The record gives the reactivity of an RNA of 177 nucleotides to 2A3 and DMS.
Conditions: 150 mM KOAc, 10 mM MgCl2 and 150 mM bicine (pH 8.5), 24 C.
For DMS the reverse transcriptase was MarathonRT.
For 2A3 the reverse transcriptase was SuperScript II with manganese.

RNA sequence: GGGAACGACUCGAGUAGAGUCGAAAAGUUUUGUACUCAAAAAGCAUGAACAGUUCUGCUGAUGUGACAUCUGAUUUCUACGUGCGCAGUGAGCCAAAACAGCUGCUGUUUGCUAUGGAAAAAGUGGGUCUCCCUCUGAUUUCGAUCAGAGGGAGACAAAAGAAACAACAACAACAAC
Reactivity to 2A3 in 0.01 (KOAc 150mM, MgCl2 10mM, bicine 150mM(pH8.5), 24C), signal-to-noise 3, nucleotides 027 to 126: g000u000u010u030u120g040u070a120c050u010c100a050a080a000a000a000g020c010a020u300g050a050a080c090a080g060u230u060c050u080g030c010u030g000a040u020g080u050g000a000c000a070u030c000u060g020a190u010u020u020c000u010a040c070g100u020g130c000g000c000a010g020u060g210a030g020c020c020a080a150a000a130c050a040g010c000u020g000c000u010g040u040u080u100g000c000u010a010u130g100g000a120a120a000a000a010g080u170g010g120
Reactivity to DMS in 0.01 (KOAc 150mM, MgCl2 10mM, bicine 150mM(pH8.5), 24C), signal-to-noise 3, nucleotides 027 to 126: g010u000u030u070u000g010u020a070c030u000c030a030a030a100a050a070g010c030a010u010g040a030a190c110a140g040u030u010c040u010g020c030u020g010a220u030g030u000g000a060c140a090u000c060u000g030a190u020u000u000c040u010a040c140g060u000g020c010g000c050a040g010u000g000a030g000c070c060a060a050a100a090c300a080g000c020u000g000c030u010g020u000u020u010g000c000u030a090u010g000g030a010a020a030a080a010g020u030g000g030